An RNA of 177 nucleotides, treated with 2A3 and read out base by base. The data come from the RNA Mapping Database (RMDB), library OK1LIB. The RNA was probed in 150 mM KOAc, 10 mM MgCl2 and 150 mM bicine (pH 8.5) at 24 C.
RNA sequence: GGGAACGACUCGAGUAGAGUCGAAAAUUCUAUACAUACAUGUCCUAAUGGGGCCAGGCGUGGUGGCUCAUGCCUGUAAUCCUAGCACUUUUAGGAGGCUGAGGCAGGUGGCUUCCCUGGGACCAGCCCGCAUUGAAGUGUUCGCACUUCAAUGCGGAAAAGAAACAACAACAACAAC
Reactivity to 2A3 in 0.01 (KOAc 150mM, MgCl2 10mM, bicine 150mM(pH8.5), 24C), signal-to-noise 2, nucleotides 027 to 126: u060u050c080u170a160u080a200c020a040u300a050c000a010u050g000u020c000c010u050a110a080u160g000g000g000g080c000c010a020g030g010c000g030u100g020g040u030g030g000c020u030c100a010u080g030c000c070u010g150u000a000a040u010c000c000u000a010g020c130a170c170u120u150u170u110a150g100g020a010g090g060c090u060g000a010g020g020c030a000g090g000u040g000g000c040u050u020c000c000c000u040g000g000g000a000c000c000a000g000c000